The record gives the reactivity of an RNA of 207 nucleotides to 2A3. For 2A3 the reverse transcriptase was SuperScript II with manganese.
[RMDB]
RNA sequence: GGGAACGACUCGAGUAGAGUCGAAAAACUGCCAUACGUGGCGGAAACACGCCUUACCAGGACUAAACAGCGUGUCUAAAAAACAGUCCUUCAUACCUGAUCUGGAGGGUAGAUCAGGAAUACUAAAAAAAUCGGGUGAAGUUCGCUUCACCCGAAACUGUUAGUUCAGCUUCGGCUGAACUAACAGAAAAGAAACAACAACAACAAC
Reactivity to 2A3 in 0.01 (KOAc 150mM, MgCl2 10mM, bicine 150mM(pH8.5), 24C), signal-to-noise 2, nucleotides 027 to 156: a000c010u020g000c000c020a020u030a050c160g050u030g000g020c020g020g010a030a030a000c000a010c000g020c000c000u020u020a010c010c040a010g010g000a000c000u060a150a010a000c000a000g010c000g000u000g050u100c130u040a010a010a000a000a000a000c050a000g000u010c010c000u020u130c100a110u070a160c000c000u000g000a000u010c000u030g060g070a080g050g040g030u050a010g000a010u000c000a010g020g000a000a000u140a080c110u160a020a010a000a030a030a050a160u020c000g010g010g000u000g000a000a020g020u070u080c150g020c120u010u010c000a010c040c000c000g000a000a010a000
Source: RMDB library M2RFOK, as collected in RNAgym.